Structure probing data (2A3 and DMS) for a 177-nucleotide construct. The RNA was probed in 150 mM KOAc, 10 mM MgCl2 and 150 mM bicine (pH 8.5) at 24 C. For DMS, 2,252 sequencing reads were counted.
RNA sequence: GGGAACGACUCGAGUAGAGUCGAAAAGAUAUGGAUCCAUGAGGGAGCUCAUAUUCGGAAACGAAUAUAGAGCGAGGAUCUCAUUGGAUCCUAAGUCAAAACCAGAUACACUUCGGUGUAUCUGGAAGAUAGGGAAGGUGUUCGCACCUUCCCUAUCAAAAGAAACAACAACAACAAC
Reactivity to 2A3 in 0.01 (KOAc 150mM, MgCl2 10mM, bicine 150mM(pH8.5), 24C), signal-to-noise 1, nucleotides 027 to 126: g000a010u010a010u060g000g000a000u000c000c000a020u000g000a000g010g000g000a030g010c020u000c010a010u000a000u000u010c010g000g020a000a000a000c000g010a010a000u010a010u040a160g010a000g000c010g030a020g030g000a010u010c000u010c000a020u100u210g000g000a000u010c000c000u000a000a010g010u000c020a000a010a030a150c020c000a010g000a000u020a000c030a010c020u080u230c300g240g000u010g000u000a010u000c010u000g000g020a000a050
Reactivity to DMS in 0.01 (KOAc 150mM, MgCl2 10mM, bicine 150mM(pH8.5), 24C), signal-to-noise 1, nucleotides 027 to 126: g010a010u000a030u010g000g000a030u000c000c000a020u010g000a010g040g000g000a020g030c010u000c000a020u010a010u000u010c000g010g010a000a010a010c000g020a010a000u000a010u000a110g000a010g020c010g000a060g010g000a010u000c000u000c000a000u010u020g010g000a010u000c000c010u000a000a060g010u010c000a180a110a160a240c010c000a010g000a020u010a010c000a010c000u000u020c250g000g020u000g000u000a010u000c000u000g000g000a020a030